The record gives the reactivity of an RNA of 207 nucleotides to 2A3. The reactions ran in a buffer of 150 mM KOAc, 10 mM MgCl2 and 150 mM bicine (pH 8.5), at 24 C.
[RMDB]
RNA sequence: GGGAACGACUCGAGUAGAGUCGAAAAAGAGCCGGAUACGUCCGGCUCAACGGGGGAUACGUGUGGUGCCGUCCGCUCCCCCUAUGGCAUAGCAAAUGCACCACACACUAGGCUACGGCCUAGUGAAAAAAGGUGUAUGUGUUCGCACAUACACCAAUCUCAUUUCUCUCUUCGGAGAGAAAUGAGAAAAAGAAACAACAACAACAAC
Reactivity to 2A3 in 0.01 (KOAc 150mM, MgCl2 10mM, bicine 150mM(pH8.5), 24C), signal-to-noise 1, nucleotides 027 to 156: a010g020a010g010c000c040g000g000a030u040a000c180g040u080c000c000g000g000c000u010c000a000a000c000g000g000g000g000g000a010u020a140c000g020u010g000u000g100g000u000g030c010c010g030u060c040c070g010c030u050c000c000c000c010c020u040a140u140g150g020c070a110u090a070g030c010a030a030a030u100g010c000a000c000c000a000c000a000c000a000c000u000a000g010g000c000u010a020c290g090g010c000c000u000a030g010u030g050a070a000a000a000a030a000g000g000u000g010u000a000u000g010u000g010u020u040c130g000c080a000c000a000u000a000c000a000c000c000a000a000